Annotation: Structure probing data (DMS and 2A3) for a 177-nucleotide construct. The RNA was probed in 150 mM KOAc, 10 mM MgCl2 and 150 mM bicine (pH 8.5) at 24 C.
[RMDB]
RNA sequence: GGGAACGACUCGAGUAGAGUCGAAAAGCGUGAGGGCGAUGUCGUCGAUGGGGAGCUUGUCUCGUAAGCGAUUUCCCGACGCACUGGAGAGACGCGCUUUUCCUUUGAGCGCGAGGAGAAUGAGUGGGCUUCUUCGCCUAUUCGUAGGCGAAGAAGCAAAAGAAACAACAACAACAAC
Reactivity to DMS in 0.01 (KOAc 150mM, MgCl2 10mM, bicine 150mM(pH8.5), 24C), signal-to-noise 1, nucleotides 027 to 126: g000c050g000u000g000a140g010g000g010c130g000a060u010g000u000c020g020u000c030g000a110u020g010g000g020g010a150g000c060u000u010g030u020c080u000c100g010u000a120a120g000c020g000a120u000u000u000c010c020c030g010a230c030g010c100a100c100u000g010g030a170g010a090g000a100c010g020c060g000c010u050u010u000u020c080c100u000u010u000g010a060g030c030g030c010g000a030g000g010a080g000a070a040u010g000a100g010u000g010g010
Reactivity to 2A3 in 0.01 (KOAc 150mM, MgCl2 10mM, bicine 150mM(pH8.5), 24C), signal-to-noise 1, nucleotides 027 to 126: g060c070g040u080g010a080g060g090g000c080g030a130u110g090u160c000g010u010c020g100a220u150g020g000g000g040a020g040c010u010u010g110u140c040u000c100g100u150a000a050g000c020g030a040u020u030u000c010c000c010g000a020c000g010c010a020c080u060g030g050a110g000a010g040a030c000g050c000g040c140u020u020u070u090c020c070u100u020u150g040a040g030c060g000c060g020a040g020g050a040g040a090a140u200g020a070g130u120g030g100
Source: RMDB library OK2TRN, as collected in RNAgym.
DMS adducts were read by reverse transcription with MarathonRT.